An RNA of 177 nucleotides, treated with DMS and 2A3 and read out base by base.
[RMDB]
RNA sequence: GGGAACGACUCGAGUAGAGUCGAAAAUCGAAGCCCCGUCUCCGGGCGGGGUGGAGCCGUCGAUGAGACACCGCCCACCUCCAGCUGUGGAGCUAACUCCCGCUGGGAGGACAUCGGUAGGUGGGCAUAUAAAUGCAACUUUCGAGUUGCAUUUAUAAAAAGAAACAACAACAACAAC
Reactivity to DMS in 0.01 (KOAc 150mM, MgCl2 10mM, bicine 150mM(pH8.5), 24C), signal-to-noise 9, nucleotides 027 to 126: u020c020g010a300a300g000c000c000c000c010g000u000c000u000c220c190g020g020g010c000g010g010g000g030u000g010g000a180g010c100c050g010u000c010g010a090u030g000a230g000a060c040a120c100c090g000c010c010c000a020c000c000u000c000c000a070g000c020u010g020u060g000g000a040g000c110u020a140a190c010u000c000c000c000g010c150u020g000g000g000a020g010g000a060c090a050u020c110g000g010u020a030g000g000u000g010g000g020c020a050
Reactivity to 2A3 in 0.01 (KOAc 150mM, MgCl2 10mM, bicine 150mM(pH8.5), 24C), signal-to-noise 9, nucleotides 027 to 126: u100c010g010a020a010g000c000c000c000c000g000u000c020u030c060c190g160g000g000c000g000g000g000g000u030g010g020a020g050c030c030g040u050c010g020a080u120g020a020g010a030c010a010c030c020g000c000c000c000a010c000c000u000c000c000a010g000c020u110g070u300g200g080a020g000c020u100a150a160c010u000c000c010c020g130c100u100g020g010g000a030g000g010a010c020a080u130c050g010g010u060a010g000g000u000g010g000g000c020a000